[RMDB]
RNA sequence: GGGAACGACUCGAGUAGAGUCGAAAACUCCCCUCAAAAUCGUUUCAGUCCAGAAUUGAUUCGGCGGCCCUGUCAUGAGGCCGAAACGAAGGCACGUACCCCUUCGAAUGGCGUCGGGGAGUCAGCGAAAGCACUGACCCUUUCGAGGGUCAGUGAACUACAUUAGUGAGUUCGCUCACUAAUGUAGAAAAGAAACAACAACAACAAC
Reactivity to DMS in 0.01 (KOAc 150mM, MgCl2 10mM, bicine 150mM(pH8.5), 24C), signal-to-noise 2, nucleotides 027 to 156: c020u000c010c000c000c000u010c050a070a080a130a090u000c020g040u000u000u000c020a080g000u010c030c070a220g000a130a120u000u010g010a160u000u010c050g020g030c030g030g070c010c000c000u000g060u000c200a110u000g020a070g010g030c000c020g000a000a050a130c010g000a030a050g000g070c050a070c060g000u000a150c060c050c010c000u000u000c010g020a100a150u010g020g030c050g010u010c100g020g000g010g010a070g020u000c050a170g000c060g000a070a110a170g010c020a050c010u010g000a020c000c010c010u000u000u000c290g020a040g010g020g020u000c000a010g010u000g010a010a090
Reactivity to 2A3 in 0.01 (KOAc 150mM, MgCl2 10mM, bicine 150mM(pH8.5), 24C), signal-to-noise 4, nucleotides 027 to 156: c020u020c000c010c000c000u100c070a220a210a140a170u090c020g030u050u040u030c050a050g040u030c080c040a070g020a220a140u100u070g060a070u100u040c050g050g000c000g010g000c040c010c000u060g030u100c020a060u080g010a040g010g020c020c000g010a010a000a000c000g010a010a010g020g000c090a010c170g180u220a100c020c020c000c000u010u020c010g020a040a030u040g030g010c020g030u090c050g010g010g000g030a020g030u030c030a010g080c030g130a120a030a010g060c010a000c010u010g010a000c010c000c000u030u070u060c130g100a030g000g000g010u000c000a000g000u000g000a000a000